[RMDB]
RNA sequence: GGGAACGACUCGAGUAGAGUCGAAAACAUGAGUCACAGUACAUGGGCCUAGACAAAUUGGCACGGCCGGUGGAUGACCUCCGCAAAUUGACCACGAAGAGUGAGCCGCAAGGCAAGGAUUUUGUGAUGAGUGUCAAAGCUUCGGCUUUGACACUCAAAAAGAAACAACAACAACAAC
Reactivity to DMS in 0.01 (KOAc 150mM, MgCl2 10mM, bicine 150mM(pH8.5), 24C), signal-to-noise 1, nucleotides 027 to 126: c150a110u040g000a100g040u000c000a020c070a150g000u000a090c080a080u000g000g000g010c070c080u010a210g000a150c130a120a040a230u000u000g010g080c010a160c230g030g000c080c020g010g000u000g060g010a090u000g010a080c200c020u000c080c000g050c060a070a030a080u000u000g050a120c050c100a060c050g080a090a110g020a090g010u000g000a170g000c000c000g060c140a060a150g010g040c050a090a100g000g000a080u000u000u000u000g000u000g000a150
Chemical mapping of a 177-nucleotide RNA with DMS. For DMS, 486 sequencing reads were counted. Source: RMDB library OK2TST, as collected in RNAgym. The RNA was probed in 150 mM KOAc, 10 mM MgCl2 and 150 mM bicine (pH 8.5) at 24 C. DMS adducts were read by reverse transcription with MarathonRT.